[RMDB]
RNA sequence: GGGAACGACUCGAGUAGAGUCGAAAAAGGGCACACGGGCUCUCAGUCUAGUCAAUACAGCUGCACGUUAGAACCGGGAUCUAUGGGCCAUUUGCGGUGGUCAACGCUUCAGCAGUACAUUGACAACGACAGGAAGACAGUUCGCUGUCUUCCUGUCAAAAGAAACAACAACAACAAC
Reactivity to DMS in 0.01 (KOAc 150mM, MgCl2 10mM, bicine 150mM(pH8.5), 24C), signal-to-noise 2, nucleotides 027 to 126: a130g020g020g000c030a060c090a110c210g000g000g000c020u000c040u000c050a170g010u000c060u000a110g000u000c040a030a030u000a020c060a110g010c000u000g010c300a240c060g000u000u000a300g000a090a070c020c000g010g020g000a030u030c090u000a120u000g030g000g000c050c050a060u000u000u000g010c010g040g010u000g000g020u000c080a010a030c060g000c200u010u010c060a040g020c000a030g000u020a060c190a110u010u000g000a020c030a090a010c230
Reactivity to 2A3 in 0.01 (KOAc 150mM, MgCl2 10mM, bicine 150mM(pH8.5), 24C), signal-to-noise 1, nucleotides 027 to 126: a000g030g010g010c020a020c020a060c130g160g050g000c020u000c000u000c020a020g030u000c050u120a020g000u000c010a000a030u020a070c050a040g000c010u020g040c010a010c060g040u050u050a030g020a060a020c030c030g040g020g000a040u040c040u090a170u240g110g050g000c000c060a040u110u050u160g120c050g000g020u020g020g010u040c020a010a030c040g000c050u100u080c020a030g000c000a000g010u010a030c020a070u010u030g010a010c030a010a010c120
Source information:
Chemical mapping of a 177-nucleotide RNA with DMS and 2A3. For 2A3, 1,677 sequencing reads were counted. The data come from the RNA Mapping Database (RMDB), library OK2TRN. The DMS profile rests on 1,074 reads. Values cover nucleotides 27 to 126. 2A3 adducts were read by reverse transcription with SuperScript II with manganese. The RNA was probed in 150 mM KOAc, 10 mM MgCl2 and 150 mM bicine (pH 8.5) at 24 C. High 2A3 reactivity points to a flexible backbone, as in loops and unpaired stretches.